[RMDB]
RNA sequence: GGGAACGACUCGAGUAGAGUCGAAAAGAUAUGGAAAUCUGUGGACAUGAACCCCGCUCGGAAACGAGCGGAGCGUUCAACAGCCAUUGGAUUUCCUAAGUCAAAGCGAUGGCUUCGGCCAUCGCAAUCAUGUACCUAGGUUCGCCUAGGUACAUGAAAAAGAAACAACAACAACAAC
Reactivity to 2A3 in 0.01 (KOAc 150mM, MgCl2 10mM, bicine 150mM(pH8.5), 24C), signal-to-noise 3, nucleotides 027 to 126: g000a010u010a050u110g000g000a000a000a010u000c020u000g020u000g010g000a040c100a300u300g010a030a010c020c010c010c000g010c000u000c000g000g010a030a030a030c010g000a010g000c010g000g000a000g000c170g000u010u010c010a100a080c060a050g020c000c010a030u120u300g030g020a000u000u000u030c000c000u000a020a000g020u020c020a080a110a060g000c000g010a000u000g020g000c000u060u140c300g130g010c010c010a010u010c000g010c000a000a010
Reactivity to DMS in 0.01 (KOAc 150mM, MgCl2 10mM, bicine 150mM(pH8.5), 24C), signal-to-noise 4, nucleotides 027 to 126: g000a010u000a100u020g000g000a010a030a000u000c000u010g020u010g000g010a040c070a280u020g000a010a010c000c020c010c000g020c000u000c000g000g000a030a020a080c000g010a000g010c000g010g000a010g010c240g010u000u000c000a110a090c220a110g010c010c010a000u000u020g060g000a020u000u000u000c000c000u000a010a100g010u000c010a130a130a120g010c000g010a010u000g010g020c000u000u020c300g030g020c000c000a000u000c010g030c010a010a020